[RMDB]
Notes
Structure probing data (DMS and 2A3) for a 177-nucleotide construct. The 2A3 profile rests on 967 reads. Source: RMDB library OK2TST, as collected in RNAgym. For 2A3 the reverse transcriptase was SuperScript II with manganese.
RNA sequence: GGGAACGACUCGAGUAGAGUCGAAAAACGACGUCGUGAGAACAAUUUCUGGGCCAUACGGAGAUCUGAUUCCUUCAUCCUCUCCUCACCACGAUGUCUGAGUGUGUCCUCCAUUGUAGCCCAUGGACACCACAGUGGGGUUCGCCCCACUGUGGUGAAAAGAAACAACAACAACAAC
Reactivity to DMS in 0.01 (KOAc 150mM, MgCl2 10mM, bicine 150mM(pH8.5), 24C), signal-to-noise 2, nucleotides 027 to 126: a110c200g000a110c010g030u000c020g010u010g000a150g020a130a120c120a060a120u030u020u000c060u000g010g010g040c040c080a050u010a070c150g000g010a020g010a050u010c070u000g000a090u010u000c180c100u000u000c080a060u000c050c080u010c000u000c000c010u000c040a140c110c000a050c050g010a020u000g010u000c000u000g000a120g010u000g000u000g010u000c020c000u000c080c060a060u000u000g000u010a110g010c010c000c010a100u020g000g000a110
Reactivity to 2A3 in 0.01 (KOAc 150mM, MgCl2 10mM, bicine 150mM(pH8.5), 24C), signal-to-noise 1, nucleotides 027 to 126: a010c020g010a000c030g040u030c000g000u010g010a250g040a130a050c090a150a200u110u190u100c050u110g040g010g030c070c000a020u070a080c080g070g000a010g010a040u060c020u070g000a010u080u120c040c050u120u040c020a090u050c000c040u040c010u060c020c000u020c010a040c010c020a020c010g000a010u020g020u000c040u050g010a050g050u170g020u040g040u080c000c010u070c030c010a050u060u150g110u080a040g040c070c050c000a000u010g000g010a010